[RMDB]
RNA sequence: GGGAACGACUCGAGUAGAGUCGAAAAAUUAGUAUUACGACGCUAGAGCUGAAAUUCUUGGACCGUCGUAAGACUACCUUAAGCGAAAGCAUUUGCCAAAGAUGUUUUCAUUAAUCAAGAACGAAAGCAUUGUUAUCUUGUUCGCAAGAUAACAAUGAAAAGAAACAACAACAACAAC
Reactivity to 2A3 in 0.01 (KOAc 150mM, MgCl2 10mM, bicine 150mM(pH8.5), 24C), signal-to-noise 6, nucleotides 027 to 126: a000u110u040a010g010u010a010u010u010a000c010g000a000c010g000c030u020a010g000a010g010c070u130g110a060a060a050u080u000c010u030u050g060g050a100c060c050g000u000c000g000u000a000a000g010a000c010u070a080c000c010u040u090a070a020g090c070g090a000a000a010g000c000a010u020u050u080g100c070c100a100a120a030g010a010u010g020u010u010u000u000c010a030u030u110a040a080u130c140a100a060g070a130a020c040g030a080a020a000g010
Reactivity to DMS in 0.01 (KOAc 150mM, MgCl2 10mM, bicine 150mM(pH8.5), 24C), signal-to-noise 6, nucleotides 027 to 126: a130u030u010a010g010u000a020u000u000a030c000g020a020c000g000c050u000a080g010a010g010c150u010g000a130a110a110u010u000c000u000u010g020g010a110c300c020g010u000c000g010u000a010a020g000a020c000u000a060c090c030u010u000a030a070g010c120g010a000a010a010g000c010a010u000u000u000g020c240c240a070a100a040g010a000u000g000u000u000u000u000c000a070u000u010a040a050u010c220a070a100g000a050a050c080g000a080a100a090g000